RNA sequence: GGGAACGACUCGAGUAGAGUCGAAAAGAUAUGGAUCCGUUUAGGGAGCUGCAUAUCGGAAACGAUAUAUAGCGAGGAUCUAACGGAUCCUAAGUCAAAGGAGAAUACUGUUCGCAGUAUUCUCCAAGUGCAUACACUUGUUCGCAAGUGUAUGCACAAAAGAAACAACAACAACAAC
Reactivity to DMS in 0.01 (KOAc 150mM, MgCl2 10mM, bicine 150mM(pH8.5), 24C), signal-to-noise 1, nucleotides 027 to 126: g000a020u000a100u010g000g000a010u000c000c000g020u000u000u030a040g030g010g000a090g010c000u010g000c100a030u020a000u000c000g010g020a040a010a030c000g000a010u000a000u000a090u000a010g020c020g020a190g000g010a180u020c000u020a040a000c000g010g020a030u000c010c000u000a000a060g000u000c010a140a190a150g000g000a020g000a020a000u000a000c000u010g000u000u020c260g010c010a010g000u000a000u000u010c020u000c000c000a000a030
Reactivity to 2A3 in 0.01 (KOAc 150mM, MgCl2 10mM, bicine 150mM(pH8.5), 24C), signal-to-noise 2, nucleotides 027 to 126: g010a000u010a020u050g010g000a000u020c010c030g030u020u050u300a140g020g050g060a130g010c000u000g030c010a010u000a010u040c020g000g000a010a010a010c010g000a000u010a000u010a000u010a000g010c050g130a300g190g170a160u000c010u000a000a010c000g000g000a000u000c000c000u000a010a010g010u000c050a070a090a150g000g000a010g000a020a000u000a000c000u020g110u080u200c300g040c170a010g000u000a000u000u000c000u000c010c000a000a000
An RNA of 177 nucleotides, treated with DMS and 2A3 and read out base by base. The RNA was probed in 150 mM KOAc, 10 mM MgCl2 and 150 mM bicine (pH 8.5) at 24 C. Values cover nucleotides 27 to 126.